[RMDB]
RNA sequence: GGGAACGACUCGAGUAGAGUCGAAAACGGUUACGCCUUCUUUACCGUUAUCAAGGAAGGUACUCGGCCAUGCUAAGGGAAGCAUUAUUCCUUAGGCGCAUGUCGCCGCCAGCAUGGUGUGAGAGGAAAAAGUAUGCUGGGUUCGCCCAGCAUACAAGACUAUCUGUGCGUUCGCGCACAGAUAGUCAAAAGAAACAACAACAACAAC
Reactivity to DMS in 0.01 (KOAc 150mM, MgCl2 10mM, bicine 150mM(pH8.5), 24C), signal-to-noise 1, nucleotides 027 to 156: c030g000g000u000u000a000c020g020c000c020u000u000c000u000u000u000a010c000c020g000u000u000a040u000c120a000a020g000g030a030a030g000g010u000a050c000u000c020g020g000c000c000a010u010g010c020u000a240a150g050g000g000a030a030g010c150a140u020u000a150u000u000c000c000u000u000a090g000g050c000g000c020a090u000g000u020c040g040c030c000g000c110c050a070g030c020a020u020g000g030u010g000u000g010a060g020a080g030g040a030a050a060a100a110g040u000a000u000g000c000u010g010g000g010u000u010c300g010c000c000c000a020g000c000a000u000a000c000a040a120
Reactivity to 2A3 in 0.01 (KOAc 150mM, MgCl2 10mM, bicine 150mM(pH8.5), 24C), signal-to-noise 4, nucleotides 027 to 156: c000g010g000u030u020a040c070g000c010c010u010u000c010u000u030u030a020c010c020g270u150u050a060u090c060a000a000g040g000a000a000g000g000u050a060c010u000c000g020g000c010c000a010u010g000c020u040a070a060g000g000g000a020a010g010c060a200u090u160a180u100u210c000c000u020u100a070g000g000c000g020c030a140u220g100u280c020g010c030c000g010c030c030a000g000c000a000u010g000g060u050g080u110g050a050g010a020g060g080a050a050a010a000a010g000u000a000u000g010c000u010g000g000g040u000u060c080g090c010c000c000a000g000c010a000u000a000c000a000a000